[RMDB]
RNA sequence: GGGAACGACUCGAGUAGAGUCGAAAAUCAAGACAUAUAAUGUCUAUAGAGCUGCACUAGACUUGGCAGUCAAAUUCAAGCACUCUCCGAAAGGAUCAGGAAGGUUUAAUUACGCAACCUGCUUCCAAGAACUUACAUGGUUCGCCAUGUAAGUUCUAAAAGAAACAACAACAACAAC
Reactivity to 2A3 in 0.01 (KOAc 150mM, MgCl2 10mM, bicine 150mM(pH8.5), 24C), signal-to-noise 8, nucleotides 027 to 126: u120c050a030a000g020a000c030a000u190a010u110a200a180u090g000u000c010u020a090u120a050g050a000g020c100u050g010c020a070c120u060a030g050a060c030u120u100g080g000c040a020g010u020c010a030a110a080u160u120c030a050a000g040c010a010c040u080c010u010c030c010g130a100a100a060g010g000a020u020c010a000g010g040a030a030g050g040u050u060u060a150a170u300u080a050c200g030c130a020a030c000c000u020g010c130u050u000c010c000a010
Reactivity to DMS in 0.01 (KOAc 150mM, MgCl2 10mM, bicine 150mM(pH8.5), 24C), signal-to-noise 3, nucleotides 027 to 126: u040c130a070a040g010a000c010a010u010a130u030a150a110u010g010u020c000u020a170u010a060g000a070g020c110u020g000c050a110c110u010a100g010a060c030u010u050g050g000c160a040g000u000c030a040a080a080u000u000c190a130a070g000c060a010c040u000c020u000c040c020g020a070a100a080g020g000a040u010c040a010g000g000a050a230g000g000u000u000u040a060a120u030u000a050c050g010c040a050a300c010c010u000g010c170u000u000c030c040a120

This 177-nucleotide RNA was probed chemically with 2A3 and DMS. The 2A3 profile rests on 7,859 reads. Conditions: 150 mM KOAc, 10 mM MgCl2 and 150 mM bicine (pH 8.5), 24 C. The data come from the RNA Mapping Database (RMDB), library OK1LIB.